This 177-nucleotide RNA was probed chemically with 2A3 and DMS. The RNA was probed in 150 mM KOAc, 10 mM MgCl2 and 150 mM bicine (pH 8.5) at 24 C. 2A3 adducts were read by reverse transcription with SuperScript II with manganese. The 2A3 profile rests on 9,853 reads. Reactivities are given for positions 27 through 126. Source: RMDB library M2PK90, as collected in RNAgym.

RNA sequence: GGGAACGACUCGAGUAGAGUCGAAAAAAGUUGCACCAGGUACGGAUACCAGACGUUGCGAAACAGGGUGACAUGAGGAUCACCCAUGUACUGUCCCUUGGCAGCCGUACCUGGUGCUGGUGAAAAAACCUGUAGAAUGUUUCGACAUUCUACAGGUAAAAGAAACAACAACAACAAC
Reactivity to 2A3 in 0.01 (KOAc 150mM, MgCl2 10mM, bicine 150mM(pH8.5), 24C), signal-to-noise 5, nucleotides 027 to 126: a000a010g220u100u030g010c000a000c000c010a000g000g010u000a000c010g000g000a010u000a040c010c000a000g000a010c030g050u080u090g060c060g120a110a080a080c050a110g010g000g000u010g010a010c040a090u300g180a130g140g060a080u010c010a010c010c000c000a000u020g010u010a010c030u060g020u030c020c010c000u010u020g020g010c030a010g010c000c000g000u000a000c010c000u000g000g000u000g000c000u010g010g000u060g040a070a020a010a000a020
Reactivity to DMS in 0.01 (KOAc 150mM, MgCl2 10mM, bicine 150mM(pH8.5), 24C), signal-to-noise 7, nucleotides 027 to 126: a080a070g000u010u000g020c000a010c000c000a010g010g010u000a010c000g010g010a060u000a050c010c010a100g000a040c050g000u000u000g010c100g000a110a070a060c070a080g000g000g020u000g000a010c020a170u010g010a140g030g010a200u000c030a020c010c000c000a020u000g010u000a080c100u010g000u000c050c130c080u010u000g010g010c090a020g010c000c000g010u000a000c010c000u000g000g010u000g000c000u000g000g010u010g000a000a040a060a070a070

For DMS the reverse transcriptase was MarathonRT.